[RMDB]
An RNA of 207 nucleotides, treated with DMS and 2A3 and read out base by base. 2A3 adducts were read by reverse transcription with SuperScript II with manganese. The data come from the RNA Mapping Database (RMDB), library M2RFPK. 2A3 is a SHAPE reagent: it acylates the 2'-hydroxyl of flexible nucleotides of all four kinds. The 2A3 profile rests on 4,791 reads.
RNA sequence: GGGAACGACUCGAGUAGAGUCGAAAAGAAACGCAAGGCCGCUGACCGACGGGAUAUUGUGGGGCUUACCACAGGGGACGCGGGGUUAUCACUUGCCUUUUAAGCCGACCGUCUGGGCUGCAUACAAACCACCCAACUAUCUUCGGAUAGUUGGGAAGAAUACUACAAUCUUCGGAUUGUAGUAUUCAAAAGAAACAACAACAACAAC
Reactivity to DMS in 0.01 (KOAc 150mM, MgCl2 10mM, bicine 150mM(pH8.5), 24C), signal-to-noise 2, nucleotides 027 to 156: g000a090a090a090c070g010c020a080a080g000g040c040c040g040c030u000g020a180c030c010g000a110c030g010g000g000a160u000a070u010u000g030u010g000g000g010g000c160u000u000a080c050c060a030c040a060g010g030g000g020a150c150g020c000g000g010g000g010u010u010a070u000c070a060c040u000u010g000c010c060u000u000u000u000a050a100g010c040c010g010a090c030c030g000u000c050u000g020g010g040c060u000g000c030a110u000a050c060a070a100a110c040c040a160c010c000c000a000a000c000u000a000u000c000u000u020c300g030g000a010u000a010g010u010u000g010g010g010a010a000
Reactivity to 2A3 in 0.01 (KOAc 150mM, MgCl2 10mM, bicine 150mM(pH8.5), 24C), signal-to-noise 5, nucleotides 027 to 156: g020a010a040a000c080g000c040a040a010g070g050c010c010g010c060u050g080a040c010c030g040a060c040g030g080g040a120u120a100u260u100g020u040g010g020g040g110c090u090u180a080c010c000a010c030a040g030g010g020g000a010c060g010c030g020g000g000g030u120u110a100u200c030a030c090u020u030g010c000c000u020u150u040u100a070a020g000c000c010g040a070c010c000g000u020c030u060g000g000g050c020u020g000c010a050u140a110c060a030a090a040c030c020a020c010c010c000a000a000c000u000a000u000c000u030u020c070g070g000a000u000a000g000u000u000g000g000g000a000a000